[RMDB]
RNA sequence: GGGAACGACUCGAGUAGAGUCGAAAAAUAAGCUGUCUGGCUUAGCAGAUGACUGCAUGACAUAUCUGCAUAAGGAUAUCCGGAAGGAACCGGUGCCUGUUUUGCCAGGAAUCCACUACUUCAUGGGCUAUCCGGCUAGUUUCGACUAGCCGGAUAGAAAAGAAACAACAACAACAAC
Reactivity to DMS in 0.01 (KOAc 150mM, MgCl2 10mM, bicine 150mM(pH8.5), 24C), signal-to-noise 2, nucleotides 027 to 126: a110u010a070a100g000c090u010g030u000c040u000g010g010c010u000u010a090g020c020a030g010a050u000g000a140c160u000g010c080a110u020g000a170c120a120u010a040u000c030u030g020c090a120u010a090a050g010g000a070u010a070u010c000c000g000g030a170a170g000g030a140a100c100c050g000g000u010g000c020c000u010g000u000u010u010u020g010c030c020a030g010g000a070a090u010c020c020a090c140u010a120c050u010u010c070a080u000g010g000g020
Reactivity to 2A3 in 0.01 (KOAc 150mM, MgCl2 10mM, bicine 150mM(pH8.5), 24C), signal-to-noise 1, nucleotides 027 to 126: a000u080a020a000g040c050u030g050u130c040u060g030g080c030u050u060a050g000c000a010g020a040u040g070a100c080u040g010c070a140u220g010a080c000a060u190a020u050c000u010g000c040a040u050a200a020g010g000a020u030a110u160c000c020g070g010a130a080g120g060a010a220c000c010g000g000u020g030c000c010u000g050u000u300u110u110g010c000c030a000g030g020a010a010u020c000c040a120c050u130a020c000u070u150c020a090u060g080g020g000
Conditions: 150 mM KOAc, 10 mM MgCl2 and 150 mM bicine (pH 8.5), 24 C. The record gives the reactivity of an RNA of 177 nucleotides to DMS and 2A3. For 2A3, 874 sequencing reads were counted. For 2A3 the reverse transcriptase was SuperScript II with manganese. The data come from the RNA Mapping Database (RMDB), library OK2TRN.